[RMDB]
RNA sequence: GGGAACGACUCGAGUAGAGUCGAAAAGACUUGCAUUUUACUGGGACAAAUGGUGUUGGUGAGGUGGGCCGUGGUAUAGCCCUAACGCUAUUCAAUCUUGCUGAUACGCUUCUCGGUGGGUUGCCGACCCCUCCUUUGAAUUCGUUCAAAGGAGGGGAAAAGAAACAACAACAACAAC
Reactivity to DMS in 0.01 (KOAc 150mM, MgCl2 10mM, bicine 150mM(pH8.5), 24C), signal-to-noise 3, nucleotides 027 to 126: g000a090c070u010u000g010c050a060u000u000u000u000a060c070u000g010g010g010a060c090a090a080a090u000g010g020u000g020u000u000g020g020u000g010a060g000g020u000g020g010g020c050c060g010u000g010g000u010a050u010a060g010c020c030c070u000a060a080c170g000c030u010a050u000u010c100a080a060u000c040u000u000g000c050u000g000a080u000a070c110g000c060u000u010c020u000c000g010g010u010g000g000g000u000u000g020c030c090g010a230
Reactivity to 2A3 in 0.01 (KOAc 150mM, MgCl2 10mM, bicine 150mM(pH8.5), 24C), signal-to-noise 3, nucleotides 027 to 126: g040a040c040u080u050g020c020a080u050u030u080u180a040c050u030g020g000g000a030c040a050a160a120u120g030g010u030g000u070u040g010g020u050g030a030g050g060u050g060g030g040c010c010g020u050g000g040u110a080u060a110g010c000c000c050u060a100a030c070g010c060u070a070u090u130c040a030a060u020c020u030u080g010c010u020g020a020u020a080c040g040c060u050u010c050u030c010g010g040u020g010g030g030u020u060g030c010c000g060a120